[RMDB]
RNA sequence: GGGAACGACUCGAGUAGAGUCGAAAACCCUGUCUCCUCGGUUCUUCUUCGAUCCGGACCGGCUCAUCUCGGCAAAGGGCGGCAGUCCUCAGUACUCUUACUCUUUCCUAUAAAGAGGAGACUGCUGGUGCGAACUACUUCGGUAGUUCGAAAAGAAACAACAACAACAAC
Reactivity to DMS in 0.01 (KOAc 150mM, MgCl2 10mM, bicine 150mM(pH8.5), 24C), signal-to-noise 9, nucleotides 027 to 129: c030c020c010u030g020u020c010u020c030c010u000c000g060g000u040u030c020u000u010c070u010u020c090g020a150u030c060c000g000g000a060c100c040g000g000c020u000c040a060u010c040u030c060g010g050c090a060a120a120g000g000g050c020g000g020c110a060g000u010c000c000u000c060a050g010u030a070c130u010c010u010u010a180c010u020c010u000u020u020c080c100u010a080u050a080a040a030g000a020g020g000a010g000a030c030u000g000c020u010g030g060u030g010
Reactivity to 2A3 in 0.01 (KOAc 150mM, MgCl2 10mM, bicine 150mM(pH8.5), 24C), signal-to-noise 9, nucleotides 027 to 129: c000c000c000u000g020u000c010u000c000c000u010c020g020g010u060u030c020u110u000c010u080u090c070g080a100u020c020c030g020g040a050c020c000g010g000c010u020c020a090u020c030u030c030g020g000c040a100a070a090g040g020g000c000g010g010c010a020g030u030c010c000u040c010a020g020u050a100c020u010c000u060u080a290c000u030c000u030u110u030c030c040u140a140u160a230a060a010g010a000g000g010a010g000a010c000u020g000c020u050g020g110u090g050